Chemical mapping of a 207-nucleotide RNA with 2A3. Source: RMDB library M2RFOK, as collected in RNAgym. Reactivities are rounded to 0.1 and cut off at 0 and 3. For 2A3 the reverse transcriptase was SuperScript II with manganese. The RNA was probed in 150 mM KOAc, 10 mM MgCl2 and 150 mM bicine (pH 8.5) at 24 C.
RNA sequence: GGGAACGACUCGAGUAGAGUCGAAAAAUCAGAGGGCGCUAUCAUGCAAACUAGGAUUGUCUGUUCAUGCACAGAACCAACUACCGAUAACUAACAGUGCAUGAAGGUUAGUUAUUCCAUAUUAAUUAAAACUCGUAAUUCUUCGGAAUUACGAGAACCCAUCUUUAGCCUUCGGGCUAAAGAUGGGAAAAGAAACAACAACAACAAC
Reactivity to 2A3 in 0.01 (KOAc 150mM, MgCl2 10mM, bicine 150mM(pH8.5), 24C), signal-to-noise 2, nucleotides 027 to 156: a010u050c040a030g010a040g040g070g010c080g000c020u150a160u300c180a080u240g000c010a000a000a010c030u030a040g010g050a030u010u000g030u040c040u040g010u000u020c000a020u010g000c000a000c000a010g020a120a050c070c000a070a050c080u220a140c130c100g030a010u010a040a000c000u010a010a010c020a080g140u040g060c010a020u000g060a060a080g180g000u010u050a000g010u000u000a010u070u110c040c010a090u140a060u170u250a220a090u080u150a030a030a040a030c000u000c000g000u000a000a010u000u020c010u000u010c090g040g020a000a000u000u000a000c000g000a000g000a000a000